[RMDB]
RNA sequence: GGGAACGACUCGAGUAGAGUCGAAAAAUGACAGUGGAUUGCAUUUAUGCACUUUGAUGUAUCAUACAUAGAUGGGAUAUAAUUUCUCAUUUUUCUGAGUGUACAUGUUACAGAAUCAUAUUGGUCAUGUUAAUGGUUGGUUCGCCAACCAUUAACAAAAAGAAACAACAACAACAAC
Reactivity to DMS in 0.01 (KOAc 150mM, MgCl2 10mM, bicine 150mM(pH8.5), 24C), signal-to-noise 3, nucleotides 027 to 126: a050u000g000a020c020a040g020u000g010g000a030u000u000g000c020a050u010u020u000a110u030g000c020a030c040u000u000u000g000a090u000g000u010a070u020c200a110u010a050c060a060u000a070g000a020u000g000g000g000a010u000a090u030a130a100u020u000u000c010u010c000a030u000u000u000u020u000c100u000g010a090g040u000g010u000a030c200a030u000g010u000u010a080c130a090g000a060a060u000c010a030u010a090u000u000g010g010u000c020a050
Reactivity to 2A3 in 0.01 (KOAc 150mM, MgCl2 10mM, bicine 150mM(pH8.5), 24C), signal-to-noise 3, nucleotides 027 to 126: a000u040g030a010c020a030g030u020g040g060a070u040u030g020c020a050u060u080u150a060u120g000c010a010c030u020u020u040g070a030u040g060u100a160u150c150a080u070a220c020a020u100a020g030a010u010g000g000g020a000u040a010u060a140a230u060u080u000c010u000c000a010u000u050u020u030u040c040u040g020a010g010u010g010u010a060c060a060u020g010u060u050a060c060a070g130a030a030u050c060a020u030a090u230u090g120g030u010c030a020
Notes
The record gives the reactivity of an RNA of 177 nucleotides to DMS and 2A3. Values cover nucleotides 27 to 126. The reactions ran in a buffer of 150 mM KOAc, 10 mM MgCl2 and 150 mM bicine (pH 8.5), at 24 C. DMS adducts were read by reverse transcription with MarathonRT. The 2A3 profile rests on 2,798 reads. 2A3 adducts were read by reverse transcription with SuperScript II with manganese. It was measured as part of the RMDB library OK2TST.